[RMDB]
An RNA of 177 nucleotides, treated with DMS and 2A3 and read out base by base.
Source: RMDB library RFM100, as collected in RNAgym.
RNA sequence: GGGAACGACUCGAGUAGAGUCGAAAAGUGAUUGUUAACAACAACCCGGGGUGACCCGCGGGCAAGUGCAACAGAAAGUAAACCGCCUAGAAUUUUUCUAGGUAAGGGUGAAACGGUGCGGUAAGAGGUUACGUGGGUUUUUCGAAACCCACGUAACAAAAGAAACAACAACAACAAC
Reactivity to DMS in 0.01 (KOAc 150mM, MgCl2 10mM, bicine 150mM(pH8.5), 24C), signal-to-noise 1, nucleotides 027 to 126: g000u000g060a120u000u000g020u000u030a030a000c090a150a050c130a130a110c000c010c030g000g000g000g000u020g000a190c090c020c000g060c130g030g000g000c180a070a050g000u000g070c050a030a030c050a070g030a090a100a070g010u010a020a140a050c000c000g000c000c000u010a000g060a030a160u040u020u040u040u000c000u000a020g000g010u010a050a010g070g000g000u000g000a120a070a030c140g010g030u020g010c030g000g000u040a050a060g000a110g000
Reactivity to 2A3 in 0.01 (KOAc 150mM, MgCl2 10mM, bicine 150mM(pH8.5), 24C), signal-to-noise 1, nucleotides 027 to 126: g230u100g180a300u060u040g040u040u050a110a070c110a000a050c000a000a030c030c110c000g000g030g000g010u040g190a060c000c010c060g060c070g000g000g040c080a040a020g040u060g000c010a100a060c000a010g110a060a090a010g000u000a060a210a000c000c030g020c000c100u000a000g040a040a020u040u120u200u000u000c000u000a000g000g000u000a020a000g010g000g000u090g000a020a010a020c000g020g070u020g000c000g050g000u060a060a010g040a010g140
The RNA was probed in 150 mM KOAc, 10 mM MgCl2 and 150 mM bicine (pH 8.5) at 24 C. Values cover nucleotides 27 to 126.